[RMDB]
RNA sequence: GGGAACGACUCGAGUAGAGUCGAAAAUAGGGUAGGUCAGAAGUGCCAGGGAGUUACUUCCUGAGAGCAGCAUUCAACCAGUGGCUGUUGGGCACUGGUAGACGAAUGCCCCAGCUCGUUUGACCUCGGGGUUGGGGGAAUCUUAUUCUGAGGCUGACACCUAAAUCACUUUCGAGUGAUUUAGGUGAAAAGAAACAACAACAACAAC
Reactivity to 2A3 in 0.01 (KOAc 150mM, MgCl2 10mM, bicine 150mM(pH8.5), 24C), signal-to-noise 2, nucleotides 027 to 156: u170a030g000g030g030u060a020g010g000u010c010a020g030a110a040g150u030g110c050c030a010g030g050g000a040g070u260u200a140c030u030u010c000c010u030g040a040g010a000g050c010a000g010c000a000u020u000c000a020a010c000c000a000g020u000g100g080c090u150g100u300u180g100g020g000c000a000c000u000g000g000u040a040g070a180c140g000a000a010u000g000c000c000c020c000a010g000c000u010c010g000u000u040u100g020a000c000c000u000c010g000g000g000g060u130u070g080g040g000g000g030a060a030u070c070u080u140a090u290u060c060u090g040a030g100g000c070u070g030a030

An RNA of 207 nucleotides, treated with 2A3 and read out base by base.
Reactivities are given for positions 27 through 156.
2A3 adducts were read by reverse transcription with SuperScript II with manganese.
The reactions ran in a buffer of 150 mM KOAc, 10 mM MgCl2 and 150 mM bicine (pH 8.5), at 24 C.